[RMDB]
This 177-nucleotide RNA was probed chemically with DMS. The DMS profile rests on 903 reads. The reactions ran in a buffer of 150 mM KOAc, 10 mM MgCl2 and 150 mM bicine (pH 8.5), at 24 C.
RNA sequence: GGGAACGACUCGAGUAGAGUCGAAAACUCUUAAGAUCUGCUCUUACGGCUUAUUACAAUAAUGCUGGUCCCUUUGACGAUAUAGAUUCUAAAAUGCUCUUUGCCGAAUUGGAGGGUAUGGGCGGGAAUUAUGCUCCCGUUUCGACGGGAGCAUAAUAAAAGAAACAACAACAACAAC
Reactivity to DMS in 0.01 (KOAc 150mM, MgCl2 10mM, bicine 150mM(pH8.5), 24C), signal-to-noise 1, nucleotides 027 to 126: c030u000c060u000u000a130a190g000a030u010c010u000g000c020u000c040u010u000a040c060g000g040c010u000u000a060u050u000a060c210a070a070u000a060a030u030g020c000u000g000g010u000c000c010c030u000u000u000g000a070c100g010a090u020a060u000a050g000a060u000u040c030u000a060a050a060a070u000g030c130u010c040u010u010u000g040c060c000g020a120a120u010u010g010g010a030g000g010g010u000a040u000g020g000g000c080g010g020g020a100